[RMDB]
Structure probing data (2A3) for a 207-nucleotide construct. The RNA was probed in 150 mM KOAc, 10 mM MgCl2 and 150 mM bicine (pH 8.5) at 24 C. Reactivities are rounded to 0.1 and cut off at 0 and 3. Values cover nucleotides 27 to 156. It was measured as part of the RMDB library OK3TST. For 2A3, 2,497 sequencing reads were counted.
RNA sequence: GGGAACGACUCGAGUAGAGUCGAAAAGAUGGGUCCGAUGGAUUAAUGCGUCGCCUGCCAUUGGAUCCUGAUUGAUAGAUUGACGGCGACGGUCGGAUCACUCGGUAAUUCGGUGCUCGACGAGUGAUCCGUGAUGAUAGUUAAGAGGAGCACCUAACAUUAGUAGUACGUUCGCGUACUACUAAUGAAAAGAAACAACAACAACAAC
Reactivity to 2A3 in 0.01 (KOAc 150mM, MgCl2 10mM, bicine 150mM(pH8.5), 24C), signal-to-noise 4, nucleotides 027 to 156: g080a060u140g000g000g000u020c000c000g000a000u000g000g010a030u000u180a230a050u300g050c000g040u010c000g000c010c000u010g010c000c010a000u000u010g000g000a000u010c000c000u020g010a030u060u160g060a010u030a160g160a090u010u190g070a050c050g010g000c000g000a000c010g000g020u070c010g010g010a000u000c000a000c000u000c000g020g090u140a120a110u150u190c060g000g000u000g000c000u010c010g000a010c000g000a000g000u000g000a000u000c000c000g010u010g030a000u040g000a020u030a150g170u270u180a080a020g050a070g080g010a000g000c000a000c000c000u020a070a000